[RMDB]
Structure probing data (2A3 and DMS) for a 207-nucleotide construct. The reactions ran in a buffer of 150 mM KOAc, 10 mM MgCl2 and 150 mM bicine (pH 8.5), at 24 C. For 2A3 the reverse transcriptase was SuperScript II with manganese.

RNA sequence: GGGAACGACUCGAGUAGAGUCGAAAAGGGAAUGGUGGUUUACCCCGUUAUCAAAUGAUUACCGACCAAUAAUUGGCGAAACUCGUUUCGCGUUGGCUGCCUAAUUCGAGGAAUUAGCGUGCCUUCAAAGACAUCAAGAAGUUCGCUUCUUGAUGAAGCAAGAAUUUAUCUUCGGAUAAAUUCUUGCAAAAGAAACAACAACAACAAC
Reactivity to 2A3 in 0.01 (KOAc 150mM, MgCl2 10mM, bicine 150mM(pH8.5), 24C), signal-to-noise 3, nucleotides 027 to 156: g040g020g020a130a070u090g010g030u030g070g000u050u070u220a100c010c000c000c020g110u100u120a100u110c070a050a080a140u170g020a030u090u090a040c020c040g090a080c040c050a020a040u180a100a030u090u110g030g000c000g020a030a030a050c050u050c090g040u010u010u000c020g000c010g030u020u020g000g010c040u040g050c030c000u010a010a020u010u030c070g180a090g070g140a090a030u010u000a020g000c030g070u020g000c020c000u000u020c040a080a070a030g080a030c000a010u000c010a000a010g000a000a000g000u040u080c150g030c150u000u000c000u000u010g000a000u000g000a000a000
Reactivity to DMS in 0.01 (KOAc 150mM, MgCl2 10mM, bicine 150mM(pH8.5), 24C), signal-to-noise 1, nucleotides 027 to 156: g000g000g010a080a060u000g000g040u010g000g000u000u000u000a140c010c000c000c000g000u000u010a110u010c130a090a060a110u000g000a100u000u000a050c000c000g030a100c010c000a060a120u000a060a170u000u000g000g010c000g020a140a070a070c060u000c110g020u000u000u000c020g030c070g000u000u000g000g000c010u000g030c070c030u000a010a070u030u000c020g000a150g050g010a060a030u000u000a020g000c080g020u000g010c020c000u000u000c050a070a090a200g010a180c000a010u000c000a050a010g010a010a000g050u000u010c300g020c000u000u000c010u020u000g000a000u000g000a020a090